[RMDB]
RNA sequence: GGGAACGACUCGAGUAGAGUCGAAAAAUGAGAUAGCUACUUCUAUGGCUAGGAUAUAUGUUGUACAAGACCGGCUUUUCUUCUACUUCUUGCACAACCUGAGGUUAUUGAGGCUAUACAAGUCUUCAAGGGAAUAUUCUUUCGAGAAUAUUCCCUUAAAAGAAACAACAACAACAAC
Reactivity to DMS in 0.01 (KOAc 150mM, MgCl2 10mM, bicine 150mM(pH8.5), 24C), signal-to-noise 6, nucleotides 027 to 126: a070u030g000a120g010a070u010a030g000c030u010a100c110u010u020c100u000a070u010g000g020c010u000a100g000g010a130u020a100u020a050u020g010u000u010g010u000a080c050a030a040g010a050c230c070g000g000c100u010u020u010u010c060u010u010c040u010a090c080u000u000c010u000u000g020c040a050c060a030a030c010c040u010g000a100g000g000u010u010a060u000u010g000a120g010g010c030u010a060u010a050c140a080a080g000u000c020u010u000c300
Reactivity to 2A3 in 0.01 (KOAc 150mM, MgCl2 10mM, bicine 150mM(pH8.5), 24C), signal-to-noise 4, nucleotides 027 to 126: a000u230g010a090g020a070u060a030g000c030u030a040c030u110u110c040u100a080u070g030g000c010u020a060g070g000a040u060a010u040a050u260g030u010u050g020u010a020c020a060a050g040a100c070c060g070g000c070u110u050u060u010c020u140u000c020u020a060c020u040u010c010u050u060g010c050a040c020a080a080c000c000u070g030a100g070g040u070u020a040u040u070g020a010g010g000c010u010a010u030a090c070a100a010g030u010c020u030u060c000